[RMDB]
RNA sequence: GGGAACGACUCGAGUAGAGUCGAAAAUUCAGAGCCGACCCUCCGUCACACCUUUGUGUUUCCCAGUAAUUCUGCCUGGCGUUGCCGUGGCUCCUCGUUCGGAUCGGCUUUCCGCUGCCUUCCGCUGGUAUUUGACGUAAUUCGUUACGUCAAAUACAAAAGAAACAACAACAACAAC
Reactivity to DMS in 0.01 (KOAc 150mM, MgCl2 10mM, bicine 150mM(pH8.5), 24C), signal-to-noise 7, nucleotides 027 to 126: u020u020c090a090g010a100g010c030c010g000a100c070c020c020u000c050c040g000u000c050a060c080a070c070c070u000u010u010g020u010g010u010u000u000c010c010c000a150g010u020a060a110u010u010c050u010g010c030c020u000g010g010c050g020u020u020g010c030c030g020u010g000g000c030u000c020c030u000c060g010u010u000c040g000g000a070u010c080g010g000c030u000u000u000c040c040g020c050u010g000c030c010u000u000c020c030g000c120u000g010
Reactivity to 2A3 in 0.01 (KOAc 150mM, MgCl2 10mM, bicine 150mM(pH8.5), 24C), signal-to-noise 9, nucleotides 027 to 126: u090u040c040a020g020a010g070c000c010g040a070c010c000c000u020c020c020g050u040c010a030c000a020c040c030u050u070u120g090u030g020u030u040u030c010c010c000a010g040u080a020a130u130u040c030u060g030c010c010u020g030g000c050g090u060u100g010c020c020g040u030g040g010c010u020c000c010u030c010g080u080u040c020g020g020a090u030c020g020g000c020u020u040u000c000c010g030c030u030g010c000c000u030u020c010c010g030c060u060g040
Source: RMDB libraries RFM100 and RFMREP, as collected in RNAgym. This 177-nucleotide RNA was probed chemically with DMS and 2A3. The reactions ran in a buffer of 150 mM KOAc, 10 mM MgCl2 and 150 mM bicine (pH 8.5), at 24 C.